Chemical mapping of a 207-nucleotide RNA with DMS and 2A3. For 2A3, 2,962 sequencing reads were counted. Reactivities are given for positions 27 through 156. The data come from the RNA Mapping Database (RMDB), library RNAMAK. For DMS, 2,388 sequencing reads were counted.
RNA sequence: GGGAACGACUCGAGUAGAGUCGAAAAGUAGCACUUCGGUGCUACAAAAAUCCUAAGUCCAACGACGAUCGAGUGUCGGUGCUUUGAUCUAUCGGAAACGAUAGGGAGCACCCACUCGGGAGUUGGAUAUGGAAAAAAAGUCACAUUCGUGUGACAAUGGUACUUAAUCGUUCGCGAUUAAGUACCAAAAAGAAACAACAACAACAAC
Reactivity to DMS in 0.01 (KOAc 150mM, MgCl2 10mM, bicine 150mM(pH8.5), 24C), signal-to-noise 1, nucleotides 027 to 156: g040u000a020g030c030a050c000u000u000c300g060g000u010g020c010u010a000c020a010a140a060a110a110u000c000c000u000a090a230g020u000c020c000a040a010c000g030a120c120g000a140u010c040g010a050g030u000g000u020c070g020g040u000g010c000u000u000u000g010a060u000c000u020a010u000c000g030g000a290a100a240c010g030a000u000a020g000g000g000a010g000c020a000c000c010c000a000c000u000c000g000g010g000a120g030u000u000g040g030a000u000a070u000g000g000a000a000a030a060a030a150a140g020u000c000a010c020a020u000u000c300g020u020g020u000g010a000c010a020a070
Reactivity to 2A3 in 0.01 (KOAc 150mM, MgCl2 10mM, bicine 150mM(pH8.5), 24C), signal-to-noise 4, nucleotides 027 to 156: g010u000a000g010c000a010c000u030u080c300g050g000u000g020c000u000a000c000a000a000a000a000a000u040c030c000u030a100a020g040u000c010c000a000a000c000g300a050c000g000a010u010c000g000a000g000u010g100u200c180g000g000u000g030c010u300u150u110g070a090u060c000u010a000u000c010g030g070a150a030a030c000g010a000u000a000g040g000g000a010g000c000a000c000c000c000a000c000u000c000g000g000g000a010g000u010u010g000g000a000u010a040u020g040g060a050a050a010a030a020a030a020g130u220c210a000c020a010u100u170c240g110u070g000u010g050a000c020a000a030